Structure probing data (DMS) for a 177-nucleotide construct.
Source: RMDB library OK2TRN, as collected in RNAgym.
For DMS the reverse transcriptase was MarathonRT.
RNA sequence: GGGAACGACUCGAGUAGAGUCGAAAACAAAAAAGUAGGCUAGAAGGUGUCUAAAUAGUCAAAGAAGUCUUAAGCUUAACUUCUGAAAAAAGCACAAAUUUUAAGUCUGGUGAGACCUGCUCAUAUGAGCCUUAUGUAACUUCGGUUACAUAAGGCUAAAAGAAACAACAACAACAAC
Reactivity to DMS in 0.01 (KOAc 150mM, MgCl2 10mM, bicine 150mM(pH8.5), 24C), signal-to-noise 1, nucleotides 027 to 126: c020a020a010a040a060a060a060g020u010a010g030g000c000u000a070g040a110a050g000g010u020g010u020c020u000a080a070a080u020a080g020u000c110a070a120a000g000a050a060g000u000c120u000u000a130a110g020c200u010u010a070a030c000u000u000c020u000g020a000a020a050a120a070a090g020c070a010c030a020a070a080u040u010u000u020a050a160g010u000c020u000g000g000u000g020a060g020a050c070c010u020g020c020u010c020a140u000a110u020g000

The RNA was probed in 150 mM KOAc, 10 mM MgCl2 and 150 mM bicine (pH 8.5) at 24 C.